[RMDB]
RNA sequence: GGGAACGACUCGAGUAGAGUCGAAAACCUGUUGGAAAGUAGUCCUGAGAGUUCAUCUGUGUAUCAACUGUUUGAGCUUGUUUUAGACCAGUACACGAAGGCACUACCAACGAGAAGGACGAUUCCAAGAAUCAGGCUAAACACCCCAUCAGGAAGCUACACUAUCGGUGUUCGCACCGAUAGUGUAAAAAGAAACAACAACAACAAC
Reactivity to 2A3 in 0.01 (KOAc 150mM, MgCl2 10mM, bicine 150mM(pH8.5), 24C), signal-to-noise 2, nucleotides 027 to 156: c010c010u010g010u050u020g020g000a080a120a140g030u120a070g020u080c000c000u060g060a070g010a020g110u090u050c010a100u050c070u100g020u000g000u090a120u150c070a080a020c020u040g050u130u090u100g050a050g050c010u000u020g090u080u140u040u120a040g010a070c020c010a020g000u080a020c040a000c010g040a140a020g040g020c020a020c010u040a070c010c000a010a050c020g010a050g040a020a070g030g000a010c010g050a090u060u000c040c000a010a020g040a010a030u130c020a000g010g000c040u120a000a100a050c070a080c040c050c070c000a040u050c020a020g020g120a040a000g070c020
Reactivity to DMS in 0.01 (KOAc 150mM, MgCl2 10mM, bicine 150mM(pH8.5), 24C), signal-to-noise 1, nucleotides 027 to 156: c030c000u010g020u010u010g000g030a160a080a130g020u000a100g000u000c000c020u000g000a250g000a130g080u000u000c070a070u010c080u000g050u010g000u000a100u000c100a070a130c040u010g010u000u000u010g010a070g060c110u000u000g000u000u000u000u000a040g000a020c040c110a160g050u010a020c010a050c010g000a130a110g000g000c080a080c080u000a170c030c010a000a110c090g020a140g000a140a030g000g010a070c020g010a180u030u000c010c020a050a100g050a060a190u010c030a020g000g040c020u000a040a110a130c060a110c020c020c030c030a160u000c010a140g010g000a070a130g010c010

The record gives the reactivity of an RNA of 207 nucleotides to 2A3 and DMS.
Source: RMDB library OK3TST, as collected in RNAgym.
The DMS profile rests on 1,917 reads.
The reactions ran in a buffer of 150 mM KOAc, 10 mM MgCl2 and 150 mM bicine (pH 8.5), at 24 C.